An RNA of 177 nucleotides, treated with DMS and 2A3 and read out base by base. Conditions: 150 mM KOAc, 10 mM MgCl2 and 150 mM bicine (pH 8.5), 24 C.
[RMDB]
RNA sequence: GGGAACGACUCGAGUAGAGUCGAAAAAGAAUAGUUUUCGAACUAUUCUCACGACGACCUUGGGUAACCCUGAGGCGCGAUCCCACGCGAUCGUCUGUUCGAACACCUGGUUGUUCGCAACCAGGAACAAUUGCAUACAAUUCGUUGUAUGCAAUUGAAAAGAAACAACAACAACAAC
Reactivity to DMS in 0.01 (KOAc 150mM, MgCl2 10mM, bicine 150mM(pH8.5), 24C), signal-to-noise 9, nucleotides 027 to 126: a020g000a010a010u000a000g010u000u000u000u010c180g020a020a010c000u000a000u000u000c000u000c120a190c100g000a040c010g010a220c090c000u000u000g010g000g000u000a100a110c260c010c010u000g000a030g000g010c090g010c010g000a060u000c000c000c020a260c080g010c040g000a100u000c030g010u000c050u000g010u000u010c100g000a100a100c250a150c010c010u000g000g010u000u000g010u000u010c180g010c010a010a010c000c000a010g010g000a050a090
Reactivity to 2A3 in 0.01 (KOAc 150mM, MgCl2 10mM, bicine 150mM(pH8.5), 24C), signal-to-noise 9, nucleotides 027 to 126: a000g010a000a000u020a010g000u010u040u070u160c220g040a010a000c000u010a010u020u000c020u020c020a080c050g070a010c010g110a130c010c000u010u010g020g010g020u090a090a080c030c000c000u010g030a020g020g000c010g000c000g010a040u020c010c020c010a030c020g040c050g050a100u070c010g040u010c100u140g110u070u130c070g060a100a030c060a070c080c000u000g010g010u010u010g020u050u060c210g010c060a000a000c000c000a000g000g000a000a000